[RMDB]
This 177-nucleotide RNA was probed chemically with DMS and 2A3.
RNA sequence: GGGAACGACUCGAGUAGAGUCGAAAACUGGCACUUUCACAGUUCCUUCCCCAGGCAGUGGGGCCAGGAUUUGGUAGCUGGUGCUGAGAGAAAACCCUUGAUUGUAUUCUUGCCCUGGGAUUAUACCCCAUUGCAUUGAUUUCGAUCAAUGCAAUGGAAAAGAAACAACAACAACAAC
Reactivity to DMS in 0.01 (KOAc 150mM, MgCl2 10mM, bicine 150mM(pH8.5), 24C), signal-to-noise 5, nucleotides 027 to 126: c020u000g000g010c030a060c050u020u010u010c030a090c030a080g000u010u000c010c000u010u010c010c000c000c030a100g000g020c180a100g050u000g020g000g000g010c140c180a030g010g000a060u010u010u030g020g000u010a070g010c080u000g000g010u000g000c010u000g010a080g000a100g020a090a050a130a080c030c010c020u010u000g000a090u000u000g020u010a080u000u000c020u000u000g010c080c030c020u010g010g000g000a170u020u030a080u020a170c100c070
Reactivity to 2A3 in 0.01 (KOAc 150mM, MgCl2 10mM, bicine 150mM(pH8.5), 24C), signal-to-noise 5, nucleotides 027 to 126: c020u000g010g010c020a000c030u040u120u070c070a030c000a060g010u020u030c000c010u020u050c020c000c000c000a020g250g080c040a100g140u060g030g020g010g000c020c050a010g010g000a030u080u060u090g140g040u100a070g020c040u010g040g000u030g010c020u090g050a030g000a010g030a060a070a040a060c020c000c000u020u040g150a230u050u060g040u120a220u110u000c020u030u050g020c000c030c030u040g040g000g000a020u080u050a040u160a080c010c020
The data come from the RNA Mapping Database (RMDB), libraries RFM100 and RFMREP.